[RMDB]
RNA sequence: GGGAACGACUCGAGUAGAGUCGAAAAGAAGAGCGACGGUGCCAGUAGGUGUUGCCGCCGUCGACGCCGACCACCGCGAACGCUGGCUUGCCCUCCUUGACCAGGCGGGCCAACCCCUGCUCGACGCCACGAUUACCUGUUUCGACAGGUAAUCGUGAAAAGAAACAACAACAACAAC
Reactivity to DMS in 0.01 (KOAc 150mM, MgCl2 10mM, bicine 150mM(pH8.5), 24C), signal-to-noise 3, nucleotides 027 to 126: g010a070a130g010a090g000c000g010a090c090g010g020u010g030c130c070a110g010u000a060g020g020u000g010u000u010g010c080c120g000c030c070g020u000c040g020a040c030g010c050c020g000a110c060c020a030c010c030g020c110g000a080a110c090g000c040u000g010g010c050u000u000g010c000c010c040u010c050c030u000u000g000a100c150c100a130g010g000c080g010g010g030c000c120a050a060c020c020c020c030u000g020c040u000c050g000a100c100g020c090
Reactivity to 2A3 in 0.01 (KOAc 150mM, MgCl2 10mM, bicine 150mM(pH8.5), 24C), signal-to-noise 2, nucleotides 027 to 126: g050a010a000g020a000g040c040g060a050c050g030g000u030g000c020c060a060g050u130a060g050g110u060g050u130u110g050c050c030g050c030c010g020u060c000g000a020c020g010c000c000g030a040c020c020a020c030c010g020c020g030a090a010c020g010c070u020g000g000c000u010u040g000c000c000c000u000c000c020u060u090g050a070c000c030a010g010g030c010g000g020g000c010c000a020a040c020c000c000c030u030g010c020u020c020g070a070c070g010c020

The record gives the reactivity of an RNA of 177 nucleotides to DMS and 2A3. Conditions: 150 mM KOAc, 10 mM MgCl2 and 150 mM bicine (pH 8.5), 24 C. 2A3 adducts were read by reverse transcription with SuperScript II with manganese.